[RMDB]
RNA sequence: GGGAACGACUCGAGUAGAGUCGAAAAAUCCUGCCCUUCGGGGCAGGAUGCAGCUUCGCUCUUGAGAGCGCGACUUAAGAGGAAUCCCAACGCCCAGAAGCACUAUUUCUCAGUUCGCUGAGAAAAAACGACAAACUUUAUUCGUAAAGUUUGUCGUAAAAGAAACAACAACAACAAC
Reactivity to DMS in 0.01 (KOAc 150mM, MgCl2 10mM, bicine 150mM(pH8.5), 24C), signal-to-noise 3, nucleotides 027 to 126: a020u000c000c000u000g010c000c000c000u000u020c190g040g000g010g030c000a010g000g010a000u000g010c180a110g000c050u000u000c020g000c010u010c000u000u000g010a060g010a080g010c040g010c090g000a080c010u010u010a030a040g010a020g000g020a110a090u000c010c000c010a100a170c190g000c110c070c030a070g000a030a030g020c030a150c200u000a110u000u000u000c000u000c010a020g020u000u000c220g020c000u010g000a020g000a000a010a010a070a090
Reactivity to 2A3 in 0.01 (KOAc 150mM, MgCl2 10mM, bicine 150mM(pH8.5), 24C), signal-to-noise 2, nucleotides 027 to 126: a000u010c000c000u000g010c010c000c000u010u070c220g050g030g010g000c000a000g000g000a000u000g020c010a020g010c010u070u030c020g000c020u040c000u070u090g060a060g000a030g110c040g010c030g060a080c010u020u010a010a010g010a000g060g000a040a070u020c000c000c020a030a050c090g100c030c030c010a020g010a030a000g070c010a020c050u100a150u050u060u030c020u000c000a010g000u050u090c120g060c100u020g000a000g000a000a030a010a020a000